Record summary:
An RNA of 177 nucleotides, treated with DMS and 2A3 and read out base by base. For 2A3, 1,424 sequencing reads were counted. The RNA was probed in 150 mM KOAc, 10 mM MgCl2 and 150 mM bicine (pH 8.5) at 24 C.
RNA sequence: GGGAACGACUCGAGUAGAGUCGAAAAUUUGGCGUACAUGUUUUGGGCCGCAAUGCGCGUGGCGCCCGUCACCACACAGUCCAAGACCUCGUUGAUUGUCUGCACGCACGUGCUCUUUCCGGAGCCACGGAAUGUGACUAUUCGUAGUCACAUUCCGAAAAGAAACAACAACAACAAC
Reactivity to DMS in 0.01 (KOAc 150mM, MgCl2 10mM, bicine 150mM(pH8.5), 24C), signal-to-noise 2, nucleotides 027 to 126: u030u030u020g000g020c000g010u010a060c090a050u010g040u010u000u040u060g010g000g040c050c080g000c150a100a040u030g000c080g070c090g040u000g020g000c000g000c020c000c030g010u030c010a050c020c050a020c030a040c140a130g010u040c030c060a110a140g000a040c010c070u000c190g000u010u000g000a030u000u020g000u000c020u000g020c080a070c030g000c030a060c220g000u040g030c020u000c020u010u000u000c110c050g010g000a070g000c000c060a120
Reactivity to 2A3 in 0.01 (KOAc 150mM, MgCl2 10mM, bicine 150mM(pH8.5), 24C), signal-to-noise 3, nucleotides 027 to 126: u170u160u160g040g010c000g000u100a030c100a100u100g100u070u040u080u090g070g020g000c020c000g000c040a070a120u140g020c060g000c010g000u050g010g000c020g030c000c020c020g030u030c000a020c000c000a010c000a000c000a000g040u020c040c010a020a100g020a110c000c020u050c010g140u060u060g060a200u040u110g090u080c060u020g030c030a010c020g040c000a030c050g060u090g000c030u010c010u070u090u000c000c020g070g000a050g020c000c020a030